[RMDB]
RNA sequence: GGGAACGACUCGAGUAGAGUCGAAAAAGUCAGAGGGCGCUACCAUGCAAACUAGGGCUGGCUAAUCUUGCACAGAAUCACAUCUCGAUAAUUGUCAGUGCAAGAAGGACAAUUAUACCAUUUAAUGAAAACGUUUACCUGUUCGCAGGUAAACGAAGACAAAGUAUUGGUUCGCCAAUACUUUGUCAAAAGAAACAACAACAACAAC
Reactivity to 2A3 in 0.01 (KOAc 150mM, MgCl2 10mM, bicine 150mM(pH8.5), 24C), signal-to-noise 8, nucleotides 027 to 156: a000g010u010c010a010g010a030g030g020g010c020g000c020u090a210c070c060a100u230g010c020a020a040a060c010u050a040g010g070g020c010u000g010g000c010u040a040a030u010c000u000u010g010c000a000c000a040g150a100a070u140c050a060c030a220u050c060u080c120g060a030u020a040a010u050u020g010u020c020a010g010u000g010c000a000a010g010a010a030g030g000a010c010a030a010u040u030a030u050a110c020c070a100u120u160u190a140a140u180g100a050a060a000a020c010g000u000u000u000a000c000c000u010g000u030u070c230g020c060a000g000g000u000a000a000a000c000g000a010a010
Reactivity to DMS in 0.01 (KOAc 150mM, MgCl2 10mM, bicine 150mM(pH8.5), 24C), signal-to-noise 3, nucleotides 027 to 156: a120g000u010c010a050g030a120g010g010g020c120g010c050u010a120c070c030a100u000g050c060a060a050a160c100u010a110g030g020g020c030u000g010g010c020u010a030a120u000c020u000u000g020c000a110c020a190g000a110a150u050c090a120c070a090u020c100u010c090g000a100u010a020a040u000u000g010u010c020a300g050u000g020c060a040a040g020a080a120g030g000a040c040a010a040u000u000a020u000a140c060c050a150u010u010u000a040a150u000g000a130a100a130a150c020g020u000u000u010a010c000c000u000g030u000u000c300g010c020a010g010g010u010a000a000a000c000g010a030a060

This 207-nucleotide RNA was probed chemically with 2A3 and DMS. For DMS, 4,794 sequencing reads were counted. The reactions ran in a buffer of 150 mM KOAc, 10 mM MgCl2 and 150 mM bicine (pH 8.5), at 24 C. For 2A3 the reverse transcriptase was SuperScript II with manganese. Values cover nucleotides 27 to 156. For 2A3, 8,167 sequencing reads were counted.